Annotation:
Structure probing data (2A3 and DMS) for a 207-nucleotide construct.
[RMDB]
RNA sequence: GGGAACGACUCGAGUAGAGUCGAAAAUAGUUAUGUAUUGGACCUACCAUGAGUUGAAUGCAUGCAUACAGUGUGGUGGGAAGGGUCUGUGAGCUCUGAGAGGCCAGAGUUUGAGAGUCUGGCGGUGCUUCUAGUCAUAACAGACACAUAAUAGGACCUGUAUUUCCGAUUUCGAUCGGAAAUACAGAAAAGAAACAACAACAACAAC
Reactivity to 2A3 in 0.01 (KOAc 150mM, MgCl2 10mM, bicine 150mM(pH8.5), 24C), signal-to-noise 3, nucleotides 027 to 156: u130a010g050u090u100a030u070g050u020a090u060u130g070g030a010c000c000u010a040c010c050a040u120g060a080g120u130u070g070a140a040u090g030c100a060u090g010c010a030u050a160c050a020g060u020g010u010g230g010u010g020g000g030a010a050g050g010g010u000c000u000g060u050g030a030g010c020u010c060u100g090a060g010a030g060g010c000c000a000g000a000g000u090u170u180g110a140g000a020g060u000c010u030g010g000c020g010g020u050g010c020u050u040c020u060a010g020u080c020a030u060a150a020c020a020g020a010c010a000c000a030u110a050a050u090a160g060g040a020c050
Reactivity to DMS in 0.01 (KOAc 150mM, MgCl2 10mM, bicine 150mM(pH8.5), 24C), signal-to-noise 2, nucleotides 027 to 156: u000a040g040u000u000a010u000g000u010a120u000u010g020g000a170c010c020u000a050c010c070a090u010g010a120g000u020u000g000a150a010u020g030c050a080u000g030c090a220u000a050c040a070g040u030g060u000g040g030u010g030g020g010a070a060g010g010g000u000c010u020g010u000g000a140g000c020u000c050u010g020a070g010a200g000g040c020c010a010g000a050g010u000u000u000g010a240g000a250g020u000c000u000g000g000c030g060g050u000g020c010u020u000c060u010a120g010u000c020a100u030a140a050c020a090g000a070c010a110c040a080u010a040a180u010a160g030g020a120c190

For 2A3 the reverse transcriptase was SuperScript II with manganese. DMS (dimethyl sulfate) methylates the pairing face of unpaired adenines and cytosines. Conditions: 150 mM KOAc, 10 mM MgCl2 and 150 mM bicine (pH 8.5), 24 C. Source: RMDB library OK3TST, as collected in RNAgym. For 2A3, 1,230 sequencing reads were counted.